[RMDB]
The record gives the reactivity of an RNA of 177 nucleotides to 2A3.
The reactions ran in a buffer of 150 mM KOAc, 10 mM MgCl2 and 150 mM bicine (pH 8.5), at 24 C.
2A3 adducts were read by reverse transcription with SuperScript II with manganese.
Values cover nucleotides 27 to 126.
The 2A3 profile rests on 465 reads.
RNA sequence: GGGAACGACUCGAGUAGAGUCGAAAAGCUCGGAGACGAGCAAGGCUGACAAAACCCUGUCCCCACCUCCACGUGGUGUCGGCUGGAUAAUGCUGCAUUAUGUUGCAUUUAUCAACUGGGAAGUAAAACUGGAUCCGACUUUCGAGUCGGAUCCAGUAAAAGAAACAACAACAACAAC
Reactivity to 2A3 in 0.01 (KOAc 150mM, MgCl2 10mM, bicine 150mM(pH8.5), 24C), signal-to-noise 1, nucleotides 027 to 126: g000c000u020c000g000g000a140g010a010c000g000a000g040c000a000a000g040g000c000u000g020a020c020a000a240a060a100c010c010c010u000g020u080c100c000c020c000a000c000c050u000c030c000a050c000g120u020g040g010u020g040u040c030g020g030c000u020g060g000a000u000a000a020u060g000c050u080g000c020a070u080u140a040u300g010u000u020g020c000a030u020u140u050a100u170c000a000a070c050u060g010g000g000a030a040g060u080a040a130a000